[RMDB]
RNA sequence: GGGAACGACUCGAGUAGAGUCGAAAAAGAGGAGGCUGGGUUUUGCGAUCUUUAAGCAGAUGGCAGGUUCACCCCGUACGGUGCGUAAGUUCGCGCUUCCGUGAAACGCGAAAAUCGGACGGUGGCUAAGACCAAUAACAGUUCGCUGUUAUUGGAAGCAUAAAUAUGUGUUCGCACAUAUUUAUGCAAAAGAAACAACAACAACAAC
Reactivity to 2A3 in 0.01 (KOAc 150mM, MgCl2 10mM, bicine 150mM(pH8.5), 24C), signal-to-noise 7, nucleotides 027 to 156: a000g050a020g020g000a030g020g000c060u040g030g020g020u020u060u100u050g030c010g030a040u030c040u040u120u130a100a040g030c030a030g010a080u040g060g000c030a020g010g030u060u080c030a040c000c010c000c010g010u030a010c010g000g000u030g020c010g010u040a110a120g060u050u050c020g000c000g020c080u190u050c070c030g040u070g040a080a050a010c030g000c010g030a070a030a020a060u040c010g020g000a010c020g030g050u110g030g000c020u040a070a030g020a070c000c000a000a000u000a000a000c000a000g020u050u070c180g060c090u000g000u000u000a000u000u000g000g000a020a010
Reactivity to DMS in 0.01 (KOAc 150mM, MgCl2 10mM, bicine 150mM(pH8.5), 24C), signal-to-noise 3, nucleotides 027 to 156: a110g000a110g030g020a050g010g030c060u000g000g020g000u010u000u000u020g020c030g000a070u000c060u000u010u000a100a180g030c080a080g000a080u010g000g010c010a080g020g000u010u000c070a090c000c040c010c010g020u000a030c010g000g020u000g020c100g000u000a090a150g000u000u010c020g020c020g000c020u000u000c030c200g000u000g010a050a030a010c020g020c010g000a030a030a110a060u000c030g000g000a050c040g010g010u010g020g010c060u000a070a120g000a160c010c010a020a020u000a000a010c010a020g000u000u010c300g020c010u000g000u000u000a020u010u010g010g010a030a110